[RMDB]
RNA sequence: GGGAACGACUCGAGUAGAGUCGAAAAACAUGCUGGCCAACCCAACCCCACGCUCCUCCAUCGGCAUGAUCAUGAUGUGUUCUCAAAUAUCAGGCCAGUAAAUCACCAUGCUCGUGCUGGUAAAGGCAACUUAUGCCCAAGUUCGCUUGGGCAUAAAUAAGACAUUACCGUUCGCGGUAAUGUCUUAAAAAGAAACAACAACAACAAC
Reactivity to DMS in 0.01 (KOAc 150mM, MgCl2 10mM, bicine 150mM(pH8.5), 24C), signal-to-noise 1, nucleotides 027 to 156: a090c040a060u000g020c010u000g030g020c060c010a100a140c090c050c020a130a180c040c020c010c020a060c140g000c040u010c020c020u000c020c020a050u030c050g000g000c010a050u010g010a030u010c030a080u000g010a030u010g040u000g000u010u000c050u020c060a080a000a110u000a120u000c110a060g000g030c020c030a030g020u010a050a020a130u000c010a030c000c000a020u000g030c170u000c020g050u000g010c000u000g070g010u000a040a050a040g010g000c110a070a070c010u000u000a020u000g000c020c000c000a000a000g010u000u020c300g050c020u000u030g000g010g040c030a000u000a010a010a170
Reactivity to 2A3 in 0.01 (KOAc 150mM, MgCl2 10mM, bicine 150mM(pH8.5), 24C), signal-to-noise 2, nucleotides 027 to 156: a000c020a020u110g010c000u000g020g020c000c010a070a020c080c080c060a020a050c050c000c020c040a050c110g060c060u090c010c000u070c020c050a050u050c020g000g000c020a000u010g000a000u000c000a010u000g040a070u070g000u010g020u050u060c040u000c070a050a100a010u240a080u250c110a070g010g000c000c000a010g000u030a000a030a060u130c010a010c020c010a010u000g000c000u000c000g000u000g000c000u000g000g000u040a130a100a020g020g020c000a020a080c030u070u000a000u010g010c000c000c000a020a040g020u090u020c110g000c170u020u010g050g000g000c000a000u000a000a000a000